Background: The record gives the reactivity of an RNA of 207 nucleotides to DMS and 2A3. The data come from the RNA Mapping Database (RMDB), library OK3TST. Values cover nucleotides 27 to 156. The reactions ran in a buffer of 150 mM KOAc, 10 mM MgCl2 and 150 mM bicine (pH 8.5), at 24 C.
RNA sequence: GGGAACGACUCGAGUAGAGUCGAAAACGUUCCAUGUCGCGGGACAUUAGAAUGGUCAUGUAGUUGACAAAUUCCAUGGGCGUCACGUGUUUCCUGCCACCUGCGAUUAGGGUUACGAUGCGAUCCACCACGUCCAUGUCAUAUAGCUGCUGGAAAAACUCCUCACUAAUUUCGAUUAGUGAGGAGUAAAAGAAACAACAACAACAAC
Reactivity to DMS in 0.01 (KOAc 150mM, MgCl2 10mM, bicine 150mM(pH8.5), 24C), signal-to-noise 3, nucleotides 027 to 156: c030g020u000u000c000c020a110u010g010u000c030g050c150g010g000g020a090c050a080u000u010a070g010a040a050u010g010g000u000c040a090u000g040u010a070g020u000u000g020a100c070a090a090a140u000u020c010c010a060u000g020g020g000c030g000u000c070a090c100g000u000g020u000u000u000c010c020u000g030c060c050a070c020c010u000g010c020g010a150u000u000a120g010g010g000u000u000a070c090g010a090u000g000c050g000a060u000c060c020a080c010c080a050c030g010u000c000c020a090u000g000u000c010a080u000a110u010a140g000c000u000g000c010u010g020g010a040a070a120a120
Reactivity to 2A3 in 0.01 (KOAc 150mM, MgCl2 10mM, bicine 150mM(pH8.5), 24C), signal-to-noise 7, nucleotides 027 to 156: c030g030u040u000c010c010a030u100g050u030c050g000c050g080g060g020a040c030a070u060u090a060g070a090a040u090g070g030u050c030a030u090g080u250a070g070u060u060g020a040c040a060a140a050u080u030c020c000a010u000g000g010g010c010g010u050c060a020c140g010u030g010u020u030u030c010c030u050g030c030c030a040c010c010u050g020c070g150a160u040u220a070g030g000g040u050u030a060c080g050a080u100g050c070g010a010u020c030c010a010c010c010a000c000g010u000c000c000a000u020g040u050c050a050u100a010u070a160g030c040u060g000c010u020g050g000a020a010a030a020